[RMDB]
RNA sequence: GGGAACGACUCGAGUAGAGUCGAAAAGGGGUCGGAUGGGAGGAUCCCGAUGGAGCAACAGCCUACUGAAGCCUCCACGGUAGGACAUGCUCCGUUGGGAUCCGACGAUCAUCCGACGGAGGCACCCAAAACUACUCAUCGUUCGCGAUGAGUAGAAGUAAUCCAAGAAGUUCGCUUCUUGGAUUACAAAAGAAACAACAACAACAAC
Reactivity to 2A3 in 0.01 (KOAc 150mM, MgCl2 10mM, bicine 150mM(pH8.5), 24C), signal-to-noise 3, nucleotides 027 to 156: g010g030g050g020u000c020g000g000a000u000g000g010g000a010g000g010a000u000c000c000c020g000a000u000g000g010a000g030c050a080a170c090a110g000c030c000u010a010c010u030g030a140a030g000c000c000u000c000c000a000c000g000g010u010a000g030g060a020c060a180u300g000c000u000c000c020g000u010u010g000g000g000a000u030c000c010g000a010c000g000a000u000c000a000u000c000c000g000a000c000g000g000a010g010g000c010a020c000c000c000a020a080a020a050c000u000a000c000u000c000a000u000c000g070u090u070c290g010c000g090a000u000g000a000g000u000a000g000a000a000